[RMDB]
RNA sequence: GGGAACGACUCGAGUAGAGUCGAAAACGGGUUUCGACCCGACUUGACCGUAGGCUAUCCCAGGCUCGCCAUGGACUAUAAGGCUUCGAAAGAGGCCUUACGAAUCCAUGGAAACGCCUGUGGAUAGCCUAAACGGGGACAGUGACUUCGGUCACAAUCCUAGAAUGGGAUUCGUCCCAUUCUAGGAAAAAGAAACAACAACAACAAC
Reactivity to DMS in 0.01 (KOAc 150mM, MgCl2 10mM, bicine 150mM(pH8.5), 24C), signal-to-noise 1, nucleotides 027 to 156: c050g000g000g020u000u000u000c190g020a040c000c010c000g010a050c020u000u010g010a090c030c010g030u000a030g010g020c010u000a030u000c000c000c000a000g010g040c000u000c150g000c000c000a020u000g000g010a060c040u010a100u010a000a000g010g000c010u010u000c000g000a190a130a300g000a020g010g000c000c020u000u000a010c010g030a080a030u000c000c000a000u000g000g000a010a010a100c210g020c010c020u010g000u000g010g010a020u000a000g000c000c010u000a020a030a030c030g000g010g000g000a100c100a180g000u010g000a040c030u000u010c300g070g020u000c000a020c000a060a130
The data come from the RNA Mapping Database (RMDB), library RNAMAK. Chemical mapping of a 207-nucleotide RNA with DMS. The DMS profile rests on 3,229 reads. Conditions: 150 mM KOAc, 10 mM MgCl2 and 150 mM bicine (pH 8.5), 24 C.